[RMDB]
RNA sequence: GGGAACGACUCGAGUAGAGUCGAAAACUGAUCUUGCCCAAGAGUCCACAUCGACGGCAAGGUUUGGCACCUCGAUGUCGGCUCAUCGCAUCCUGGGGCUGGAGCAGGUCCCAAGGGUACGGCUGUUGACACAUAUCCCGUUCGCGGGAUAUGUGUCAAAAGAAACAACAACAACAAC
Reactivity to 2A3 in 0.01 (KOAc 150mM, MgCl2 10mM, bicine 150mM(pH8.5), 24C), signal-to-noise 2, nucleotides 027 to 126: c020u000g010a010u010c000u010u070g030c000c000c000a000a070g050a000g040u040c060c000a040c040a210u000c030g030a000c090g020g000c010a030a010g090g050u050u140u080g140g000c020a010c170c000u050c000g010a020u110g020u020c000g000g000c000u000c020a100u150c020g010c060a020u040c000c000u020g010g000g020g020c000u000g060g040a120g220c110a050g060g030u030c000c000c000a120a080g070g000g020u120a060c020g020g000c030u070g060u060u000